[RMDB]
RNA sequence: GGGAACGACUCGAGUAGAGUCGAAAACUCCAUCUGAUCCGGGCUGGCUGUCUUCGCCGGGGGAGCUCCCUCCCCAUCCUUGACCUUUCUUAUUAUUCCUCGGAUGUUCCAUGGCCAGUGUUUAUCCUCCUGUAGUCUCUUGAGAUUCUUGUUGAUCCUCUACUGUCUAGUUCGCUAGACAGUAGAGAAAAGAAACAACAACAACAAC
Reactivity to 2A3 in 0.01 (KOAc 150mM, MgCl2 10mM, bicine 150mM(pH8.5), 24C), signal-to-noise 1, nucleotides 027 to 156: c030u000c020c010a050u110c060u140g040a080u050c040c050g090g020g000c020u010g000g000c010u050g070u120c120u160u100c000g090c000c010g050g030g010g000g000a020g000c040u090c060c000c000u020c040c020c000c000a050u050c010c010u080u130g090a080c000c020u010u030u120c080u150u160a200u060u100a140u100u150c050c020u010c000g010g040a040u030g040u100u020c020c020a050u080g020g010c010c010a000g020u000g030u100u080u050a090u080c040c020u050c000c030u020g030u030a070g090u010c010u000c130u170u180g060a040g010a100u300u000c030u110u020g030u000u000g020a030u040c000

The data come from the RNA Mapping Database (RMDB), library VIROID. Structure probing data (2A3) for a 207-nucleotide construct. For 2A3, 647 sequencing reads were counted.